[RMDB]
RNA sequence: GGGAACGACUCGAGUAGAGUCGAAAAAGCAAGACACUGCGUUCAGGCUCUCGAUACGCCGGGAUAACCUGGCGUCAGACCUGCCGGAACUUAGCAGGGAAUCGUUACGGAUCUGCUGUAUAGCCGGGUUGUAAACACACUUCGGUGUGUUUACAACAAAAGAAACAACAACAACAAC
Reactivity to 2A3 in 0.01 (KOAc 150mM, MgCl2 10mM, bicine 150mM(pH8.5), 24C), signal-to-noise 3, nucleotides 027 to 126: a000g040c040a050a010g080a090c040a010c110u080g000c030g030u070u080c040a030g020g020c040u010c010u050c080g040a020u020a140c020g010c000c000g010g000g000a110u120a270a260c000c020u010g000g000c000g000u000c000a000g000a010c000c000u010g000c000c000g050g040a060a050c020u100u160a060g010c010a000g020g020g050a060a100u060c040g050u190u160a050c040g040g000a010u010c010u030g030c010u010g040u070a080u100a070g050c000c000g000g010
Reactivity to DMS in 0.01 (KOAc 150mM, MgCl2 10mM, bicine 150mM(pH8.5), 24C), signal-to-noise 3, nucleotides 027 to 126: a100g020c040a060a040g010a150c140a090c070u010g020c060g020u010u000c010a060g010g000c080u000c030u000c040g020a150u010a030c050g020c010c000g020g020g040a280u000a110a100c020c000u000g010g010c000g000u010c080a070g000a050c080c050u010g010c000c000g010g010a060a040c180u000u020a090g020c010a030g040g000g020a070a030u000c020g030u010u010a140c240g000g000a050u010c040u010g020c020u000g010u010a060u010a100g010c010c020g000g010